RNA sequence: GGGAACGACUCGAGUAGAGUCGAAAAAUUAACGCUGUUUUAUUGGCGCAAAGGUUUACGGAUAAACAACUAAUAAUUAAACCUUUUGUGUGCGAAACGUGGUUGUUUAACGUACUCUUUAAUCGCUUUGGGGAUGUGUCCUUCGGGACACAUCCAAGAUCAAUUGUUGAUUCGUCAACAAUUGAUCAAAAGAAACAACAACAACAAC
Reactivity to 2A3 in 0.01 (KOAc 150mM, MgCl2 10mM, bicine 150mM(pH8.5), 24C), signal-to-noise 5, nucleotides 027 to 156: a000u120u080a070a030c060g010c060u030g130u060u030u050u080a120u090u150g050g000c020g000c020a070a040a010g020g000u010u030u030a020c020g000g050a180u130a160a030a010c020a010a010c040u080a040a120u080a110a030u160u080a070a070a040c010c000u040u100u170u210g180u080g010u030g040c080g030a030a040a050c140g020u030g000g000u010u010g020u020u020u010a030a010c020g010u010a000c010u000c000u040u080u080a120a130u110c030g020c080u080u040u130g110g060g000g010a000u000g000u000g000u000c000c000u000u020c120g060g000g000a000c000a000c000a000u000c000c000a000a000
Reactivity to DMS in 0.01 (KOAc 150mM, MgCl2 10mM, bicine 150mM(pH8.5), 24C), signal-to-noise 1, nucleotides 027 to 156: a170u000u000a040a110c080g020c000u010g000u010u010u000u000a090u020u040g000g000c010g030c140a110a060a060g020g000u000u000u000a050c030g000g020a230u010a060a070a020c020a030a080c000u000a090a100u000a100a150u010u030a100a150a050c000c010u000u020u000u000g030u010g070u000g050c050g020a090a070a090c120g020u000g010g000u000u010g000u000u000u000a030a090c040g010u000a050c050u000c030u000u000u000a070a150u010c040g000c020u000u000u000g030g000g000g000a010u030g010u000g010u000c010c010u000u010c300g040g030g010a040c000a000c000a000u010c020c000a010a050
Structure probing data (2A3 and DMS) for a 207-nucleotide construct. For 2A3, 3,201 sequencing reads were counted. As a SHAPE reagent, 2A3 marks flexible, mostly unpaired nucleotides at the ribose 2'-OH. The DMS profile rests on 2,817 reads.